[RMDB]
RNA sequence: GGGAACGACUCGAGUAGAGUCGAAAAGAUAUGGAACGCCGUGAACUACCUGCAGCUCGGAAACGAGCUGACCCAGGCACGGCCGUUCCUAAGUCAAAAUCUAAGCCACGUUCGCGUGGCUUAGAAAUCUACGUAGUGAGUUCGCUCACUACGUAGAAAAAGAAACAACAACAACAAC
Reactivity to 2A3 in 0.01 (KOAc 150mM, MgCl2 10mM, bicine 150mM(pH8.5), 24C), signal-to-noise 1, nucleotides 027 to 126: g000a000u010a000u040g000g010a000a010c010g030c010c020g060u020g120a300a300c170u300a300c290c000u020g100c000a000g010c000u010c010g000g000a010a010a000c020g020a010g090c000u000g010a020c080c020c010a010g000g050c000a010c010g020g000c020c010g020u000u020c000c020u000a020a000g000u010c020a020a000a000a300u020c000u010a010a030g000c000c000a020c000g020u050u070c230g000c000g220u000g000g000c010u020u010a000g000a010a000a010
Reactivity to DMS in 0.01 (KOAc 150mM, MgCl2 10mM, bicine 150mM(pH8.5), 24C), signal-to-noise 2, nucleotides 027 to 126: g010a010u020a070u000g010g000a030a060c010g020c010c020g030u000g020a300a210c250u020a300c020c010u000g000c020a000g030c010u000c020g000g000a000a020a090c010g000a020g010c000u000g000a070c300c300c110a020g000g020c000a020c000g000g010c060c050g010u000u000c000c000u000a010a060g000u000c040a070a040a090a090u000c010u000a000a010g010c000c000a000c010g020u000u000c300g030c000g080u000g000g010c000u000u010a000g000a010a070a120